Background:
Conditions: 150 mM KOAc, 10 mM MgCl2 and 150 mM bicine (pH 8.5), 24 C. The record gives the reactivity of an RNA of 177 nucleotides to DMS and 2A3. 2A3 adducts were read by reverse transcription with SuperScript II with manganese.

RNA sequence: GGGAACGACUCGAGUAGAGUCGAAAAUGUGUGCGGAGGCCCUGCCUUGUGCCCCGUGAGCUCAGCCUGACAGAAAUCCUUUGGUAGCACUUAAGGCUCCUCUUCCUCCCAUUGAGGCAGGGAAGACAUACCAACGGGAUUUCGAUCCCGUUGGUAUAAAAGAAACAACAACAACAAC
Reactivity to DMS in 0.01 (KOAc 150mM, MgCl2 10mM, bicine 150mM(pH8.5), 24C), signal-to-noise 2, nucleotides 027 to 126: u010g030u010g050u010g020c040g010g040a160g030g020c060c040c050u010g000c010c000u000u010g020u010g010c000c010c020c030g000u010g000a100g060c030u000c090a060g010c040c020u000g010a120c210a050g000a070a110a110u010c030c030u010u010u000g000g010u010a030g040c090a120c100u000u010a120a070g020g020c000u000c050c030u000c030u010u010c020c030u000c030c100c050a140u000u000g000a050g000g000c070a030g000g000g010a060a060g010a100c240
Reactivity to 2A3 in 0.01 (KOAc 150mM, MgCl2 10mM, bicine 150mM(pH8.5), 24C), signal-to-noise 1, nucleotides 027 to 126: u090g090u020g000u040g040c070g030g050a000g080g060c000c030c000u060g020c030c030u050u070g110u170g020c040c030c030c010g000u030g010a010g040c000u000c110a020g000c040c020u040g030a090c020a050g030a040a190a000u070c000c040u080u090u150g090g040u120a000g060c040a000c110u010u150a020a040g070g020c040u020c000c030u030c020u180u000c020c010u100c030c000c000a050u070u240g060a130g000g050c020a010g040g040g010a000a030g060a010c090

For 2A3, 837 sequencing reads were counted.
Source: RMDB library OK2TST, as collected in RNAgym.